[RMDB]
RNA sequence: GGGAACGACUCGAGUAGAGUCGAAAAGCGACGCCUUUAGAAGAAGAGGCUAGGUGGUAUUCCGGUGUGGGAUACUUGGUAAUAUGUAACGCUAAUUGCAUAAGAUUGUAGGACGGAAUUUACAGUCAAAACGGUCCUGCGUUCGCGCAGGACCGAACUAACGCACUUAGUUCGCUAAGUGCGUUAGAAAAGAAACAACAACAACAAC
Reactivity to DMS in 0.01 (KOAc 150mM, MgCl2 10mM, bicine 150mM(pH8.5), 24C), signal-to-noise 1, nucleotides 027 to 156: g000c000g020a280c030g010c010c020u000u000u000a170g030a150a250g000a130a130g000a110g020g000c040u000a060g040g030u010g000g000u010a080u000u000c000c030g010g050u000g060u000g080g000g030a120u020a000c060u000u030g060g010u020a110a090u000a060u010g010u000a070a100c020g000c120u020a120a110u010u010g040c060a060u010a030a090g000a040u000u000g010u010a070g000g010a060c010g020g010a100a250u010u000u010a060c030a110g030u030c000a090a040a080a210c030g070g020u000c060c020u000g020c000g070u000u010c230g030c030g000c000a060g030g000a000c030c000g030a020a020
Reactivity to 2A3 in 0.01 (KOAc 150mM, MgCl2 10mM, bicine 150mM(pH8.5), 24C), signal-to-noise 4, nucleotides 027 to 156: g080c010g030a010c070g010c010c030u090u090u100a160g040a260a020g040a080a010g010a050g020g020c030u040a050g020g100u050g040g000u050a060u060u030c030c040g060g130u280g060u190g080g000g000a030u050a070c030u020u110g030g010u060a070a060u020a110u110g070u070a060a040c020g000c140u080a110a100u110u090g000c010a020u030a130a080g020a020u040u040g040u020a020g000g090a020c040g020g050a040a020u090u040u060a040c020a010g010u030c000a030a020a080a070c010g000g000u010c000c000u010g010c010g010u030u030c180g000c000g010c040a020g010g000a000c000c000g010a000a000